[RMDB]
RNA sequence: GGGAACGACUCGAGUAGAGUCGAAAAUUUUUAUUUGCUAUUAGGGCUAACUGAAGAUUUCUAAGCUCUAUGUGCCAGACUGCAUAUUUCUUCUUCAAUGUUUUACAGUCCCUAUUUUCUUUUAGGUAAAAUGAUGGAGUUGGAUGAGAUAGUCUCAAUAUUAGUCAGUGUUCGCACUGACUAAUAUAAAAGAAACAACAACAACAAC
Reactivity to DMS in 0.01 (KOAc 150mM, MgCl2 10mM, bicine 150mM(pH8.5), 24C), signal-to-noise 2, nucleotides 027 to 156: u050u000u020u000u000a040u040u020u000g010c000u010a150u000u010a060g030g020g020c020u000a070a200c110u000g010a080a100g020a140u010u010u010c060u000a140a080g030c010u000c000u000a040u000g010u000g030c010c080a150g020a060c040u000g030c010a080u000a090u000u000u010c020u000u000c030u000u000c030a070a080u000g010u000u000u000u000a050c020a130g010u010c040c050c030u000a060u000u000u000u000c050u000u010u000u010a100g000g020u000a020a010a020a050u010g020a110u010g000g010a140g020u000u000g000g000a080u000g010a170g020a130u010a060g040u000c010u000c050a110
Reactivity to 2A3 in 0.01 (KOAc 150mM, MgCl2 10mM, bicine 150mM(pH8.5), 24C), signal-to-noise 2, nucleotides 027 to 156: u070u090u020u110u100a210u030u140u150g000c000u000a050u100u000a020g010g010g010c020u060a150a080c120u240g100a100a050g190a300u150u260u060c060u080a080a010g010c000u000c000u020a030u020g070u020g030c040c000a030g010a090c040u030g000c010a040u010a090u220u040u070c010u030u000c000u020u040c000a090a110u110g010u010u040u000u020a020c030a090g140u120c000c000c010u060a140u020u130u200u180c030u100u300u080u090a050g000g020u010a000a000a000a030u130g040a050u040g020g000a010g010u030u000g060g020a020u040g050a010g010a030u030a040g020u010c030u020c070a070

This 207-nucleotide RNA was probed chemically with DMS and 2A3. For 2A3, 997 sequencing reads were counted. Reactivities are given for positions 27 through 156. 2A3 adducts were read by reverse transcription with SuperScript II with manganese.